Annotation
Chemical mapping of a 207-nucleotide RNA with 2A3. As a SHAPE reagent, 2A3 marks flexible, mostly unpaired nucleotides at the ribose 2'-OH.
[RMDB]
RNA sequence: GGGAACGACUCGAGUAGAGUCGAAAACACGACAAGACGAUGAAGGACGGCGAGGACAAGGUCGUCCACUACAUCGACGCCGAUUCGGUGUACGAGCGCGGCAAGGUGCCGAUCGUCGACGAAGGACCGAAGGGUCUGUUCGACUUCGUCUCCGAUCUCACCUCACCUUGUUCGCAAGGUGAGGUGAAAAAGAAACAACAACAACAAC
Reactivity to 2A3 in 0.01 (KOAc 150mM, MgCl2 10mM, bicine 150mM(pH8.5), 24C), signal-to-noise 2, nucleotides 027 to 156: c070a010c000g150a020c090a080a030g080a040c000g050a050u020g050a120a030g060g000a000c000g000g050c020g030a030g190g000a090c110a030a060g120g000u050c050g000u000c010c000a000c000u020a030c000a000u030c000g050a030c140g090c070c030g010a080u130u140c030g000g000u000g020u030a070c040g010a040g100c110g000c040g000g000c030a020a160g120g000u010g040c000c010g030a060u080c030g010u040c010g020a000c000g060a090a020g040g020a090c020c000g000a000a000g150g010g010u000c010u060g180u010u010c000g010a010c010u010u000c000g000u000c000u000c030c020g000a130u000c010
2A3 adducts were read by reverse transcription with SuperScript II with manganese.